[RMDB]
RNA sequence: GGGAACGACUCGAGUAGAGUCGAAAAAGUUUGUAUUAAGUCUGUUAAAUUCUCCCAGGUUAUGCCUAUUGGUGUUUACAGACGAGUAUGGUAUAGACCAUAUAUUACUAUUCUCUCUCUCAGGAGAGGAGAAUAGAUGCAUACAAAGGAGAAGCAACAUUAUUAAUCGCUUCGGCGAUUAAUAAUGAAAAGAAACAACAACAACAAC
Reactivity to DMS in 0.01 (KOAc 150mM, MgCl2 10mM, bicine 150mM(pH8.5), 24C), signal-to-noise 1, nucleotides 027 to 156: a170g000u000u000u020g020u010a030u010u000a090a130g000u010c050u020g000u000u010a070a060a070u000u000c030u050c200c040c070a150g010g000u000u010a060u010g010c020c030u010a090u010u000g000g040u010g000u000u010u000a050c000a060g020a030c050g000a180g060u000a030u000g000g030u010a130u000a220g010a110c010c000a070u000a060u000a050u010u010a110c000u000a020u000u010c000u000c000u020c010u010c000u000c200a200g030g000a060g000a010g010g000a020g010a000a000u000a020g020a060u010g020c080a110u000a050c060a110a080a060g020g020a040g000a030a050g010c060a130a090
Reactivity to 2A3 in 0.01 (KOAc 150mM, MgCl2 10mM, bicine 150mM(pH8.5), 24C), signal-to-noise 2, nucleotides 027 to 156: a000g080u070u120u060g020u060a040u110u000a120a050g020u000c030u030g070u130u120a090a090a070u150u020c050u040c080c030c040a020g080g000u110u120a070u210g060c020c020u070a150u160u110g060g010u030g000u020u070u030a020c010a010g010a000c000g010a020g010u020a000u030g060g010u030a130u110a210g120a070c000c000a000u010a000u000a010u040u080a040c010u000a010u000u000c000u000c000u000c000u000c000u000c090a120g210g000a000g040a030g010g040a010g000a000a000u000a000g000a000u060g010c020a020u030a060c030a010a100a010g090g050a090g040a060a000g090c040a020a050